[RMDB]
RNA sequence: GGGAACGACUCGAGUAGAGUCGAAAAUGCUUGGCCGUGCGUCUCUCUUCUCUGAAAACCUUCCACGGCCUUCUCUGCCCAAUCUUUCUCUAAAGGGGAAGUUGAGGCCCUCAGGUUCUCAGCAUUGUCCUUACGCCUUAUUCGUAAGGCGUAAGGAAAAAGAAACAACAACAACAAC
Reactivity to 2A3 in 0.01 (KOAc 150mM, MgCl2 10mM, bicine 150mM(pH8.5), 24C), signal-to-noise 1, nucleotides 027 to 126: u000g000c010u000u120g020g010c010c000g020u050g030c070g080u050c000u000c000u010c040u130u020c090u010c030u000g070a060a090a090a090c010c010u080u080c070c000a000c040g030g000c000c070u000u030c070u000c010u010g030c020c010c010a000a130u070c060u000u020u010c060u020c030u260a070a080a100g070g040g030g010a010a070g000u000u000g020a100g020g040c000c020c000u090c050a070g000g100u100u050c000u000c010a000g000c030a110u050u220g120
Reactivity to DMS in 0.01 (KOAc 150mM, MgCl2 10mM, bicine 150mM(pH8.5), 24C), signal-to-noise 2, nucleotides 027 to 126: u020g010c070u000u010g000g000c010c000g040u000g030c190g010u000c030u000c040u000c050u010u010c120u010c110u040g010a080a050a090a100c030c030u000u010c100c050a050c010g010g030c000c000u000u000c050u010c090u000g000c000c000c010a060a080u010c040u000u000u000c040u000c000u000a080a090a150g010g020g020g000a010a010g000u010u000g000a070g000g010c010c070c090u000c110a040g020g010u010u000c000u010c020a040g000c220a100u020u000g020